The data come from the RNA Mapping Database (RMDB), library OK3TST. Chemical mapping of a 207-nucleotide RNA with DMS and 2A3. The reactions ran in a buffer of 150 mM KOAc, 10 mM MgCl2 and 150 mM bicine (pH 8.5), at 24 C. DMS adducts were read by reverse transcription with MarathonRT. For 2A3 the reverse transcriptase was SuperScript II with manganese. The DMS profile rests on 9,983 reads. For 2A3, 6,358 sequencing reads were counted.

RNA sequence: GGGAACGACUCGAGUAGAGUCGAAAAGGUGUCUUGCAACAACACUGCUAGUCAUAGGUCUGAUUUGGGGGAGAAAAUAUUUUUUUAAGACAGUGUCUCGCUCUAUCACCCAGGCUGAAGUGCAGUGGCAUGAUCAUAGCUCAUUGCAGCCUCAGUCGACUUAAAGAUCAUUCGUGAUCUUUAAGUCAAAAGAAACAACAACAACAAC
Reactivity to DMS in 0.01 (KOAc 150mM, MgCl2 10mM, bicine 150mM(pH8.5), 24C), signal-to-noise 3, nucleotides 027 to 156: g020g010u000g000u010c020u030u010g020c080a110a080c020a090a060c010a070c020u000g020c050u000a080g010u000c060a130u000a100g020g020u000c040u010g000a090u000u000u000g030g010g020g020g020a120g000a090a040a060a060u000a000u020u000u040u020u000u010u010a080a090g010a050c040a070g010u000g010u010c010u000c040g020c010u000c050u000a090u000c030a070c030c000c020a220g020g010c020u000g020a020a040g010u000g010c000a060g050u000g010g010c030a070u000g010a130u000c120a100u000a130g010c040u000c020a060u000u000g030c010a060g020c030c010u000c010a050g010u010c030
Reactivity to 2A3 in 0.01 (KOAc 150mM, MgCl2 10mM, bicine 150mM(pH8.5), 24C), signal-to-noise 6, nucleotides 027 to 156: g080g000u020g010u010c030u050u100g020c050a100a090c020a050a020c030a060c050u040g020c010u040a020g030u030c020a090u070a110g050g010u020c040u050g070a100u130u150u220g020g000g000g010g020a030g070a020a060a060a010u130a130u050u140u040u030u040u070u130a070a030g040a020c020a030g030u020g040u100c010u010c030g070c010u010c010u020a040u080c030a040c030c010c010a000g020g000c000u020g010a050a000g020u010g000c010a010g010u000g010g000c010a040u100g060a040u190c070a070u140a060g010c030u040c090a020u020u020g000c010a040g120c000c000u020c010a010g020u040c040